[RMDB]
RNA sequence: GGGAACGACUCGAGUAGAGUCGAAAAGGCCGAAAUGAAUCAUUUGUUGGAGGGAAACUGUGGAGAUUUGUCAAUAUGACAUAACUUCAAAAGGCGUAAUGGGAUGAGAACGCACCUCCAGUCUGUGGAAAAGAUGAAUAGUGGUGGAUGCUGUCCCCGUACUGCUUGGUUUCGACCAAGCAGUACGAAAAGAAACAACAACAACAAC
Reactivity to 2A3 in 0.01 (KOAc 150mM, MgCl2 10mM, bicine 150mM(pH8.5), 24C), signal-to-noise 3, nucleotides 027 to 156: g060g000c050c000g010a040a000a010u140g050a070a130u180c080a070u080u070u170g090u050u060g030g020a060g000g020g000a070a090a000c100u090g030u030g100g010a040g030a150u000u010u000g030u000c010a080a180u100a180u300g000a000c000a000u110a040a040c000u010u000c020a060a050a050a060g070g000c030g010u060a050a060u140g010g050g020a030u090g000a050g020a050a000c000g000c030a020c020c000u010c020c000a010g000u000c030u020g060u070g080g000a080a070a060a060g050a030u110g050a060a010u090a110g030u030g010g000u060g030g020a020u080g010c010u010g040u050c020c000c020